[RMDB]
RNA sequence: GGGAACGACUCGAGUAGAGUCGAAAACGGGAAUCGGACACUGGAACUAGUACUCUGGUCAAUGCGGAUUGCCUGUGGCGGUGUUGGCUGGACGACCGAGUGUCGGCGGAUACCUCCGGGCAGCUUGACGCCAACAGGUUUUCGAACCUGUUGGCGUAAAAGAAACAACAACAACAAC
Reactivity to 2A3 in 0.01 (KOAc 150mM, MgCl2 10mM, bicine 150mM(pH8.5), 24C), signal-to-noise 2, nucleotides 027 to 126: c060g000g000g000a030a020u020c020g000g000a010c020a050c050u060g000g090a080a070c000u010a090g040u120a070c000u010c020u040g060g000u050c030a010a010u130g020c000g070g060a130u060u250g020c000c000u150g130u200g020g000c020g000g000u010g000u050u120g020g040c020u070g040g110a010c010g040a030c000c000g060a080g080u040g040u010c000g060g010c000g020g010a000u010a010c070c000u000c000c000g000g020g010c010a000g020c000u080u040g040
Reactivity to DMS in 0.01 (KOAc 150mM, MgCl2 10mM, bicine 150mM(pH8.5), 24C), signal-to-noise 1, nucleotides 027 to 126: c080g000g010g000a100a060u000c000g000g000a050c100a000c100u000g000g000a090a120c160u020a230g000u020a120c100u000c060u070g000g010u020c010a020a020u000g070c000g000g030a100u060u060g000c010c000u000g000u010g000g010c010g000g000u000g090u000u000g000g000c000u000g000g020a010c040g000a120c100c040g030a060g060u090g010u030c020g010g010c040g000g040a020u000a030c080c000u050c000c040g000g020g020c050a040g000c020u000u020g010
Source information
This 177-nucleotide RNA was probed chemically with 2A3 and DMS. 2A3 adducts were read by reverse transcription with SuperScript II with manganese. DMS adducts were read by reverse transcription with MarathonRT. The reactions ran in a buffer of 150 mM KOAc, 10 mM MgCl2 and 150 mM bicine (pH 8.5), at 24 C.